[RMDB]
RNA sequence: GGGAACGACUCGAGUAGAGUCGAAAAACUGCAAGAUCCCGAUGGACACGCCGGCUAACAGCGUGCGCGGAUCGCGAAACAUUCCGUGCGUCGAUGUCCCCGGCAAGCGGGCUGCCUCGCCACGGGAGCAUCCUACUCGAUUCGUCGAGUAGGAUGCAAAAGAAACAACAACAACAAC
Reactivity to DMS in 0.01 (KOAc 150mM, MgCl2 10mM, bicine 150mM(pH8.5), 24C), signal-to-noise 2, nucleotides 027 to 126: a060c160u010g020c210a060a120g000a000u010c000c030c020g000a210u040g020g000a300c070a000c060g000c000c000g000g010c220u080a130a100c090a160g010c000g020u000g020c000g020c060g010g000a080u010c010g030c230g000a030a150a040c200a200u060u000c000c030g020u010g000c200g030u000c000g000a060u000g020u030c300c070c030c060g020g000c080a070a070g010c040g010g010g000c080u000g020c000c060u010c060g000c040c010a020c070g000g000g000a080
Reactivity to 2A3 in 0.01 (KOAc 150mM, MgCl2 10mM, bicine 150mM(pH8.5), 24C), signal-to-noise 5, nucleotides 027 to 126: a010c060u100g030c040a060a070g020a080u050c000c030c000g050a240u140g080g060a030c000a000c010g030c030c030g080g070c080u180a210a060c050a050g010c000g020u020g000c010g000c040g010g010a020u050c020g010c060g050a100a120a030c050a100u090u040c000c000g000u020g030c070g050u240c030g030a010u030g080u090c000c000c010c000g040g030c090a050a040g220c040g010g000g030c080u160g030c000c000u020c010g010c000c000a010c000g020g010g000a030